Chemical mapping of a 207-nucleotide RNA with 2A3. The 2A3 profile rests on 899 reads.
[RMDB]
RNA sequence: GGGAACGACUCGAGUAGAGUCGAAAAGUCCAAAAUUGAUUCGGCGGCCCUGUCAUGAGGCCGAAACGAAGGCACGUACCCCUUCGAAUGGCGGCGGGGAGUCAGCGGCUAUAUAUGCGCCUAAUGCUAAAGUCGUGCUGGUUCGCCAGCACGACAACUCUAACAUGACGUUCGCGUCAUGUUAGAGAAAAGAAACAACAACAACAAC
Reactivity to 2A3 in 0.01 (KOAc 150mM, MgCl2 10mM, bicine 150mM(pH8.5), 24C), signal-to-noise 1, nucleotides 027 to 156: g070u000c010c000a000a000a100a160u160u180g060a070u080u020c030g040g020c020g040g100c070c030c030u040g060u050c110a200u150g120a040g050g000c030c040g000a020a000a000c010g010a010a000g010g000c160a040c260g190u170a130c010c000c070c000u010u000c010g030a080a040u080g030g000c000g000g000c020g010g030g000g000a030g040u050c020a020g010c050g020g000c030u000a000u010a000u050a030u300g090c010g000c000c040u100a110a010u120g030c050u100a120a080a020g000u000c000g000u000g000c000u000g000g040u000u000c060g020c090c000a000g000c000a000c000g010a000c000a000a000
The data come from the RNA Mapping Database (RMDB), library M2RFPK.
The reactions ran in a buffer of 150 mM KOAc, 10 mM MgCl2 and 150 mM bicine (pH 8.5), at 24 C.
Reactivities are given for positions 27 through 156.